[RMDB]
RNA sequence: GGGAACGACUCGAGUAGAGUCGAAAAAACAAGCUUGCUGAAUCAGUGCACAGUCAAACAAGCACGUGUAAUGCUGAACUUUGAAUUGUCGCCCUUCUACAUGGUGAAUUUGGUUCGAUAUGAUGGACAGUGGUGUGUCCUUCGGGACACACCACUGAAAAGAAACAACAACAACAAC
Reactivity to DMS in 0.01 (KOAc 150mM, MgCl2 10mM, bicine 150mM(pH8.5), 24C), signal-to-noise 1, nucleotides 027 to 126: a050a130c180a030a080g000c030u000u000g020c090u000g010a210a060u030c140a010g000u000g010c040a030c010a060g000u010c040a000a110a080c130a280a150g000c090a040c080g020u040g050u000a100a190u000g000c050u000g030a010a230c250u000u000u050g000a030a040u000u000g000u080c060g000c000c000c000u000u000c070u000a170c090a050u000g120g000u000g010a060a010u010u000u040g040g000u000u000c050g000a030u000a110u030g000a130u010g000g000a140
Reactivity to 2A3 in 0.01 (KOAc 150mM, MgCl2 10mM, bicine 150mM(pH8.5), 24C), signal-to-noise 1, nucleotides 027 to 126: a010a000c130a110a000g090c070u000u030g120c000u070g000a080a080u000c100a050g000u000g040c000a000c080a280g000u000c040a060a060a060c070a140a000g020c010a000c020g120u090g010u020a180a110u140g020c010u000g000a000a060c040u000u000u170g070a170a090u000u100g000u000c000g120c110c000c000u040u020c000u000a080c010a050u090g010g020u170g090a080a120u020u000u150g090g000u010u010c000g000a080u000a000u290g120a020u170g000g000a000

The record gives the reactivity of an RNA of 177 nucleotides to DMS and 2A3. 2A3 adducts were read by reverse transcription with SuperScript II with manganese. Values are in units of 0.01, from 0 to 300, in steps of 10. DMS adducts were read by reverse transcription with MarathonRT. The RNA was probed in 150 mM KOAc, 10 mM MgCl2 and 150 mM bicine (pH 8.5) at 24 C.